[RMDB]
RNA sequence: GGGAACGACUCGAGUAGAGUCGAAAAUGAGUAUCGAUCGAGUAUCAGUCUGGUACGAUCGGAUCGUGAUCUGCUAGUAGCGUACCGUCUAGUCGAUCUCGAUGACAUGGAUCGACGACUGCUGACAGGUGACUUAUGUAUUCGUACAUAAGUCACCAAAAGAAACAACAACAACAAC
Reactivity to DMS in 0.01 (KOAc 150mM, MgCl2 10mM, bicine 150mM(pH8.5), 24C), signal-to-noise 9, nucleotides 027 to 126: u010g030a100g020u000a110u000c030g010a040u000c030g020a160g020u000a040u000c010a090g010u000c130u010g020g010u000a050c020g010a060u000c050g010g010a030u000c020g010u000g000a060u000c020u000g000c040u000a030g010u000a070g020c120g010u010a100c130c070g010u000c020u000a050g010u000c200g010a010u010c010u000c080g010a050u010g010a110c140a110u010g010g000a060u000c010g010a060c030g000a070c040u000g000c080u000g010a110c150a130
Reactivity to 2A3 in 0.01 (KOAc 150mM, MgCl2 10mM, bicine 150mM(pH8.5), 24C), signal-to-noise 8, nucleotides 027 to 126: u140g010a030g060u120a060u130c030g020a030u030c050g020a060g040u050a040u080c020a020g190u020c090u220g060g010u080a080c030g020a070u050c030g050g010a020u020c010g010u020g010a030u010c010u020g010c020u030a020g030u090a030g120c040g100u060a120c090c020g010u040c030u030a020g010u010c020g010a010u000c060u040c040g060a070u060g040a040c040a130u150g090g000a010u010c010g010a010c020g010a040c020u060g010c030u030g040a040c030a090